[RMDB]
RNA sequence: GGGAACGACUCGAGUAGAGUCGAAAACGCAGGCGCCUUUUGGGCUCUGUAGCCCGAGGCUGUGCUCUGCAGGUACCAGCCCCGGGCACCGCGCUUGCUUUGUGCAUAUUUCUGCCUUUCUGGAGUGGCUGGCAGGUGAUGAGGCUGGGACUUGGGGGUAGACACAAGAUUUCGAUCUUGUGUCUACAAAAGAAACAACAACAACAAC
Reactivity to 2A3 in 0.01 (KOAc 150mM, MgCl2 10mM, bicine 150mM(pH8.5), 24C), signal-to-noise 1, nucleotides 027 to 156: c050g010c000a040g000g010c000g040c040c010u070u290u300u300g040g030g020c090u060c150u260g250u280a040g010c040c000c020g000a000g000g000c030u050g020u050g010c020u010c060u260g040c060a040g030g040u000a020c020c020a030g000c010c000c000c020g020g050g000c010a030c000c050g030c030g050c000u020u060g000c000u040u120u150g000u080g030c020a020u060a090u130u130u060c040u030g070c010c010u100u160u120c090u140g080g000a060g040u020g030g000c000u000g040g000c010a050g000g020u020g010a050u060g000a040g030g050c030u020g000g000g030a020c020u070u040g000g000g000g010
Conditions: 150 mM KOAc, 10 mM MgCl2 and 150 mM bicine (pH 8.5), 24 C.
This 207-nucleotide RNA was probed chemically with 2A3.
Values cover nucleotides 27 to 156.
For 2A3 the reverse transcriptase was SuperScript II with manganese.